[RMDB]
RNA sequence: GGGAACGACUCGAGUAGAGUCGAAAAGAUAUGGAGAGGAGAAAGGGAGGCUUAAGUGUCGAAGAACUUCGUCGGAAACGACGAAGGGAGACACCAUAGCCAUCGAUCUUUCUCCUCUCCUAAGUCACAUCUGUAGAUCCUUCGGGAUCUACAGAUGAAAAGAAACAACAACAACAAC
Reactivity to DMS in 0.01 (KOAc 150mM, MgCl2 10mM, bicine 150mM(pH8.5), 24C), signal-to-noise 1, nucleotides 027 to 126: g040a080u000a260u020g010g010a070g010a000g040g010a030g000a010a020a000g000g010g000a040g060g000c000u000u000a220a120g000u000g010u010c010g030a080a180g000a210a290c000u000u000c000g030u000c000g000g000a090a130a130c040g000a000c020g010a000a000g010g030g000a110g000a000c010a010c000c050a120u010a010g000c000c000a200u000c270g010a040u000c000u010u000u000c000u000c000c010u000c000u000c010c000u000a010a020g000u010c090a300
This 177-nucleotide RNA was probed chemically with DMS. Values cover nucleotides 27 to 126. For DMS the reverse transcriptase was MarathonRT. It was measured as part of the RMDB library TTRINS. Values are in units of 0.01, from 0 to 300, in steps of 10.